[RMDB]
RNA sequence: GGGAACGACUCGAGUAGAGUCGAAAAAUGACUCGAGGUUAAAUCGUUCAAUUUAACCUUUAAAAAUAGAACUUGUUGUUUCCAUGAUUGUUUUGUGAUCAAUUGGAAACAAGACAAAAAUCCACAAAACUAAAAUGUAGAAGCUGUUUGUUGUGUCACUUACCAUAAUGUUCGCAUUAUGGUAAGUAAAAGAAACAACAACAACAAC
Reactivity to 2A3 in 0.01 (KOAc 150mM, MgCl2 10mM, bicine 150mM(pH8.5), 24C), signal-to-noise 2, nucleotides 027 to 156: a000u080g010a030c010u010c030g000a020g010g000u020u000a030a010a060u080c130g030u130u040c010a000a010u000u000u000a030a010c020c000u040u060u110a100a090a030a120a090u220a090g020a070a020c080u070u210g010u030u030g000u020u020u000c000c000a000u060g000a050u030u050g020u090u050u050u060g050u070g010a020u030c020a090a120u070u010g000g000a000a090a000c000a020a020g050a010c070a000a180a010a030a020u060c100c020a020c010a010a060a020a020c020u140a100a040a140a110u300g080u220a070g070a210a050g020c030u050g070u130u060u100g000u000u080g020u030g030u050c010
This 207-nucleotide RNA was probed chemically with 2A3. Source: RMDB library ARCHII, as collected in RNAgym. Reactivities are given for positions 27 through 156.